[RMDB]
RNA sequence: GGGAACGACUCGAGUAGAGUCGAAAACUGCUUAUACUGAUAUCCAUGCUAGAAGGGCUCAACUUGCAGGUAAUGUAUACGCCGAUGAAGAUGACGUGCGCGCUGCCUUCUAUGCAUAUGUUACCGCAGGCUUAUACUAAUUCGUUAGUAUAAGCCUAAAAGAAACAACAACAACAAC
Reactivity to 2A3 in 0.01 (KOAc 150mM, MgCl2 10mM, bicine 150mM(pH8.5), 24C), signal-to-noise 9, nucleotides 027 to 126: c010u020g040c030u150u090a090u060a180c050u060g060a040u020a030u170c070c040a030u060g010c010u030a020g010a050a030g060g020g000c030u030c090a040a090c040u030u080g020c050a030g050g000u050a070a040u110g060u060a070u020a080c090g000c010c020g110a130u150g070a030a030g050a060u090g030a020c030g050u070g040c060g000c010g010c070u060g030c010c000u010u010c010u020a040u170g010c000a010u040a020u070g030u010u030a050c030c030g030c030
Reactivity to DMS in 0.01 (KOAc 150mM, MgCl2 10mM, bicine 150mM(pH8.5), 24C), signal-to-noise 9, nucleotides 027 to 126: c050u000g020c110u010u000a090u010a090c100u010g000a090u000a050u010c080c100a070u000g010c020u000a030g010a050a050g010g000g010c080u000c070a050a080c070u000u000g020c040a120g010g000u000a060a070u010g010u000a060u000a080c170g010c040c060g000a120u010g000a060a070g010a110u010g010a040c050g010u010g020c070g020c090g020c050u000g010c020c000u000u000c010u000a070u010g020c010a030u000a030u000g010u000u000a070c040c040g020c220
An RNA of 177 nucleotides, treated with 2A3 and DMS and read out base by base. The RNA was probed in 150 mM KOAc, 10 mM MgCl2 and 150 mM bicine (pH 8.5) at 24 C. DMS adducts were read by reverse transcription with MarathonRT. Values cover nucleotides 27 to 126.